The record gives the reactivity of an RNA of 177 nucleotides to 2A3 and DMS.
RNA sequence: GGGAACGACUCGAGUAGAGUCGAAAACGUCGAAGGGCGGCGGUAGGAAGGACUGCAGGGUUGGUAGCAGGCUCACGUCGGUCGCCGCGGCGGCCGGUACUACCGCCUGAGCCGCUGUCGCGGCGGCGACGCAUGGUUCAUUCGUGAACCAUGCGUCAAAAGAAACAACAACAACAAC
Reactivity to 2A3 in 0.01 (KOAc 150mM, MgCl2 10mM, bicine 150mM(pH8.5), 24C), signal-to-noise 1, nucleotides 027 to 126: c040g030u050c060g030a110a120g090g040g000c040g000g000c020g000g000u000a030g050g100a100a080g050g050a050c030u050g000c010a040g110g130g000u150u080g080g050u030a030g010c040a010g040g040c040u070c060a110c050g060u040c020g000g020u010c010g000c000c000g000c020g030g000c000g000g000c010c000g000g000u040a040c030u010a030c000c020g020c010c010u010g020a020g010c020c000g000c010u020g130u170c080g000c040g020g000c000g000g030c030
Reactivity to DMS in 0.01 (KOAc 150mM, MgCl2 10mM, bicine 150mM(pH8.5), 24C), signal-to-noise 2, nucleotides 027 to 126: c040g010u030c070g000a110a060g000g000g010c020g000g010c000g010g030u020a050g000g010a150a110g000g000a080c020u000g010c000a070g000g010g020u020u030g030g020u010a140g030c030a060g010g000c050u010c040a170c150g000u010c000g000g020u010c000g030c000c020g050c170g020g020c020g000g000c060c080g000g000u010a090c040u000a060c020c000g000c010c030u020g000a150g010c000c020g000c000u020g000u030c120g020c110g000g000c000g000g000c070
The RNA was probed in 150 mM KOAc, 10 mM MgCl2 and 150 mM bicine (pH 8.5) at 24 C. Source: RMDB library OK1LIB, as collected in RNAgym.